[RMDB]
RNA sequence: GGGAACGACUCGAGUAGAGUCGAAAAGGGCUGAGAUCAUUAUUCUCUUGGGCUCAAGUUAUGGUGACUCAGGACUAGGUCUUCCAGGGUGAGGACAGACAGACCUGGGGUUGGCAUUCACAGGGGCGAUUGUAGGGUGAUUCGUCACCCUACAAUCAAAAGAAACAACAACAACAAC
Reactivity to 2A3 in 0.01 (KOAc 150mM, MgCl2 10mM, bicine 150mM(pH8.5), 24C), signal-to-noise 1, nucleotides 027 to 126: g050g030g000c090u120g020a020g020a120u050c030a080u050u300a110u210u130c040u010c000u040u040g140g020g020c030u010c110a010a030g030u080u060a060u060g150g100u030g040a010c000u000c030a030g040g000a050c020u040a050g000g110u000c000u030u000c020c020a100g180g020g070u250g040a070g010g000a020c010a020g040a040c050a020g050a070c010c030u000g000g020g000g000u010u010g020g000c040a030u050u050c050a050c000a060g070g000g040g010c060
Reactivity to DMS in 0.01 (KOAc 150mM, MgCl2 10mM, bicine 150mM(pH8.5), 24C), signal-to-noise 4, nucleotides 027 to 126: g000g020g010c020u000g010a050g010a100u000c100a090u000u010a080u000u000c060u000c020u000u010g010g020g020c130u010c030a050a060g010u000u000a030u000g010g010u010g020a070c020u000c020a030g000g010a080c040u000a160g020g010u000c010u000u000c020c030a290g000g010g020u020g000a050g000g000a040c060a070g010a220c160a060g000a080c020c010u000g000g010g020g020u000u000g000g000c040a070u000u000c100a080c080a090g010g010g010g020c300
The record gives the reactivity of an RNA of 177 nucleotides to 2A3 and DMS. High 2A3 reactivity points to a flexible backbone, as in loops and unpaired stretches. Reactivities are given for positions 27 through 126. It was measured as part of the RMDB library OK2TRN. For DMS, 4,574 sequencing reads were counted.